[RMDB]
RNA sequence: GGGAACGACUCGAGUAGAGUCGAAAAGAUAUGGAACAUAGUAGAGAUCCACAGGCUUUUGACGCGAUACACAUCGGAAACGAUGUGAAUCGCGAUAAGCCUGGGAUCUCUACUAUGUUCCUAAGUCGAUAUAAGCUAGCUUCGGCUAGCUUAUAUCAAAAGAAACAACAACAACAAC
Reactivity to DMS in 0.01 (KOAc 150mM, MgCl2 10mM, bicine 150mM(pH8.5), 24C), signal-to-noise 2, nucleotides 027 to 126: g010a120u030a300u010g010g000a030a010c010a010u000a000g010u000a000g010a010g010a010u000c000c000a150c010a020g010g010c000u000u000u010u010g020a300c040g020c000g020a000u000a030c000a000c000a000u010c000g010g010a130a110a240c000g000a000u000g040u000g000a010a000u000c010g040c000g000a020u000a020a000g010c000c000u000g000g000g000a000u000c010u000c000u010a010c000u010a000u010g020u000u000c000c000u000a020a080g010u000c110